[RMDB]
RNA sequence: GGGAACGACUCGAGUAGAGUCGAAAAGAUAUGGAAUAUGAACCGAACGCAUGGCGAAGAACUCGGAAACGAGGGAGCCAUGUAGUUCGUCCCAUAUUCCUAAGUCAAAGCCGCGUUCGCGCGGCAACGAAUGAUACACCUUCGGGUGUAUCAUUCGAAAAGAAACAACAACAACAAC
Reactivity to DMS in 0.01 (KOAc 150mM, MgCl2 10mM, bicine 150mM(pH8.5), 24C), signal-to-noise 2, nucleotides 027 to 126: g010a060u000a300u000g000g000a030a030u000a000u010g000a070a180c210c010g000a000a020c010g000c000a000u000g010g000c000g000a040a170g000a050a220c010u000c000g000g000a110a120a180c000g000a000g000g000g010a090g000c000c000a000u000g010u000a030g030u000u000c000g030u000c190c060c020a010u000a010u010u000c000c000u000a000a060g010u000c040a070a110a190g000c000c010g000c020g040u000u020c110g000c000g050c000g010g000c010a000a050
Reactivity to 2A3 in 0.01 (KOAc 150mM, MgCl2 10mM, bicine 150mM(pH8.5), 24C), signal-to-noise 1, nucleotides 027 to 126: g020a020u100a050u200g000g010a030a000u030a040u050g040a030a030c050c020g000a000a000c000g000c000a000u010g000g020c000g260a300a040g020a100a040c000u000c010g020g090a070a050a030c010g000a010g000g000g000a000g010c000c010a000u000g000u000a010g010u000u000c000g010u000c030c000c000a010u000a010u010u000c010c000u040a140a000g060u050c040a080a070a040g000c000c000g020c010g030u040u060c300g000c000g000c000g170g020c010a000a010

Chemical mapping of a 177-nucleotide RNA with DMS and 2A3. Source: RMDB library TTRDEL, as collected in RNAgym. For 2A3, 2,871 sequencing reads were counted. The RNA was probed in 150 mM KOAc, 10 mM MgCl2 and 150 mM bicine (pH 8.5) at 24 C.